[RMDB]
RNA sequence: GGGAACGACUCGAGUAGAGUCGAAAAAUGCAUUUAGAGUGCUUGAGCGUGAAGGAUUAAUCAAACGUAUCUAUUCAGAUACUAAAAAGAGAAACCGCACUGAAAUUGAAUUUAACAUCGAUUUAGCACCGCAGGUGAAUUUCGAUUCACCUGCGGUAAAAGAAACAACAACAACAAC
Reactivity to 2A3 in 0.01 (KOAc 150mM, MgCl2 10mM, bicine 150mM(pH8.5), 24C), signal-to-noise 3, nucleotides 027 to 126: a000u070g000c020a020u120u050u130a300g000a000g060u040g010c000u020u070g070a020g060c040g010u050g050a190a100g040g020a080u020u090a100a050u120c060a030a060a030c020g000u010a000u000c000u000a210u100u300c110a010g000a000u010a040c010u060a000a060a080a040a000g030a010g000a050a070a050c040c020g000c010a000c000u090g030a000a020a110u160u020g010a070a060u120u180u250a050a040c050a100u030c010g070a040u020u050u100a070g060c070
Reactivity to DMS in 0.01 (KOAc 150mM, MgCl2 10mM, bicine 150mM(pH8.5), 24C), signal-to-noise 1, nucleotides 027 to 126: a110u050g000c080a020u010u000u050a090g000a190g050u010g000c010u000u010g020a040g050c100g030u000g030a100a070g000g000a120u000u020a080a200u020c000a020a130a080c190g000u000a010u000c000u000a200u050u070c210a080g000a000u000a000c020u000a010a080a010a230a070g000a000g000a220a140a110c090c000g000c030a030c040u040g040a040a060a010u050u000g000a020a100u000u080u030a090a080c250a120u020c080g000a020u000u020u010a000g000c100
Conditions: 150 mM KOAc, 10 mM MgCl2 and 150 mM bicine (pH 8.5), 24 C. An RNA of 177 nucleotides, treated with 2A3 and DMS and read out base by base. For DMS, 1,349 sequencing reads were counted. Source: RMDB library OK1LIB, as collected in RNAgym. The 2A3 profile rests on 1,378 reads.